[RMDB]
RNA sequence: GGGAACGACUCGAGUAGAGUCGAAAACUCUUCAGUUUCGACUGAAGAGAAAGCCGAUCGUAGUGUGGGGUCUCCCCAUGCGAGAGUAGGGAACUGCCAGGAAAAGUGUACGAUUCGUCGUACACAACAACAUUGCGGAGUUCGCUCCGCAAUGUUGAAAAGAAACAACAACAACAAC
Reactivity to 2A3 in 0.01 (KOAc 150mM, MgCl2 10mM, bicine 150mM(pH8.5), 24C), signal-to-noise 2, nucleotides 027 to 126: c000u000c000u000u000c010a000g000u000u000u210c180g130a020c000u000g000a000a010g000a000g000a040a010a000g050c020c000g010a090u020c030g030u090a040g020u030g020u040g010g020g070g120u050c150u200c090c040c000c000a010u010g010c020g020a050g000a010g010u210a040g000g050g000a020a060c050u110g090c040c020a090g050g130a060a130a040a070g000u000g000u000a010c000g010a010u050u140c210g050u000c000g000u100a000c010a000c000a000a010
Reactivity to DMS in 0.01 (KOAc 150mM, MgCl2 10mM, bicine 150mM(pH8.5), 24C), signal-to-noise 2, nucleotides 027 to 126: c000u000c010u000u000c000a000g010u000u000u010c150g010a010c010u010g000a020a010g010a000g000a030a100a070g000c020c000g010a090u020c080g020u000a160g000u010g030u000g020g000g010g010u010c180u050c040c000c010c000a010u000g000c000g000a140g010a020g010u000a110g010g010g000a120a140c090u010g000c040c050a180g020g010a090a080a090a100g010u000g000u000a020c000g000a030u000u000c250g060u000c000g000u000a000c010a000c000a090a090